Structure probing data (2A3) for a 177-nucleotide construct.
RNA sequence: GGGAACGACUCGAGUAGAGUCGAAAACCCUAACUACACAAUUAAGGGUUCCUUUCUGUGUGGUUCUUGUGGUAGUGUUGGUUACACCAAGGAGGGUAGUGUGAUCAAUUUCUGUUACAUGCAUCAAGAACGUUUUCAUCUUCGGAUGAAAACGUUCAAAAGAAACAACAACAACAAC
Reactivity to 2A3 in 0.01 (KOAc 150mM, MgCl2 10mM, bicine 150mM(pH8.5), 24C), signal-to-noise 2, nucleotides 027 to 126: c000c000c000u000a000a000c000u010a000c020a020c000a050a280u080u040a030a010g110g150g050u210u290c010c000u020u010u020c020u010g000u000g000u000g000g000u000u020c020u030u000g000u000g040g010u020a030g000u010g000u040u000g000g000u010u000a010c000a020c020c030a080a080g110g020a050g040g100g030u110a010g000u010g000u000g010a010u010c000a000a050u100u210u020c000u000g030u000u020a020c010a020u020g060c010a060u060c040a070a140
The 2A3 profile rests on 1,877 reads. Conditions: 150 mM KOAc, 10 mM MgCl2 and 150 mM bicine (pH 8.5), 24 C.